Chemical mapping of a 177-nucleotide RNA with DMS and 2A3. DMS adducts were read by reverse transcription with MarathonRT. It was measured as part of the RMDB library OK2TST. 2A3 adducts were read by reverse transcription with SuperScript II with manganese. The RNA was probed in 150 mM KOAc, 10 mM MgCl2 and 150 mM bicine (pH 8.5) at 24 C.

RNA sequence: GGGAACGACUCGAGUAGAGUCGAAAACGGGGAACCUGCAAGUCACGCUCGAUCCCGAAGGUCCCAUCGUAGCCAGCGCGGACGGUCUCCAACUUCAAUUGGACGGCGCGACGUUGGAGGUCGCCGACACUUUGCAUGUUUUCGAACAUGCAAAGUGAAAAGAAACAACAACAACAAC
Reactivity to DMS in 0.01 (KOAc 150mM, MgCl2 10mM, bicine 150mM(pH8.5), 24C), signal-to-noise 6, nucleotides 027 to 126: c070g010g010g000g010a060a070c030c020u000g000c060a090a120g020u010c120a080c140g000c010u000c090g010a080u000c010c010c040g010a120a090g010g010u000c010c010c020a090u010c080g030u000a090g020c060c060a080g010c110g000c020g030g010a090c020g010g000u000c020u000c010c010a000a030c020u000u010c070a100a210u010u010g010g000a080c040g000g000c060g020c130g000a030c060g020u000u000g000g010a030g010g010u000c020g000c010c010g010a230
Reactivity to 2A3 in 0.01 (KOAc 150mM, MgCl2 10mM, bicine 150mM(pH8.5), 24C), signal-to-noise 4, nucleotides 027 to 126: c030g020g010g020g030a020a150c010c010u040g010c070a130a010g110u130c040a020c130g010c010u040c040g080a120u050c020c000c000g020a030a030g070g060u010c020c000c000a030u070c040g040u030a030g050c030c050a050g020c070g000c030g070g030a150c010g000g020u010c000u000c010c000a020a020c010u050u060c040a080a250u160u180g120g010a070c020g030g070c030g020c030g020a000c020g010u000u000g010g000a000g000g000u010c000g010c010c000g010a010